[RMDB]
RNA sequence: GGGAACGACUCGAGUAGAGUCGAAAAAAGACGUGUUCGUACACUUCUCUGCUAUCCAGAACGAUGGCUACAAAUCCCUGGACGAAGGUCAGAAAGUAUCCUUCACCAUCGAAAGCGGCGCUAAAGGCCUAAUAUAAUGCUUCGGCAUUAUAUUAGGAAAAGAAACAACAACAACAAC
Reactivity to 2A3 in 0.01 (KOAc 150mM, MgCl2 10mM, bicine 150mM(pH8.5), 24C), signal-to-noise 6, nucleotides 027 to 126: a000a000g060a010c040g010u030g050u080u160c090g050u220a020c020a010c010u050u020c030u010c020u060g000c010u020a040u020c030c030a060g060a140a010c050g020a040u020g020g000c010u040a030c050a050a090a070u020c020c000c000u010g040g010a030c070g020a050a000g030g010u030c040a040g210a060a150a000g070u080a080u080c000c010u010u020c010a010c010c010a030u070c010g010a040a040a020g050c020g030g000c010g000c090u100a090a040a030g080g010
Reactivity to DMS in 0.01 (KOAc 150mM, MgCl2 10mM, bicine 150mM(pH8.5), 24C), signal-to-noise 6, nucleotides 027 to 126: a070a030g000a040c070g020u000g010u000u000c210g020u010a160c050a050c030u000u010c020u000c070u010g020c040u000a050u000c020c150a140g000a080a130c160g000a030u000g010g010c050u010a070c160a070a110a110u000c020c010c010u000g010g010a100c110g010a040a030g000g000u010c110a100g010a080a070a080g020u000a070u000c010c010u000u010c040a180c030c020a040u000c080g010a070a100a110g010c060g000g010c040g000c070u010a040a090a140g000g000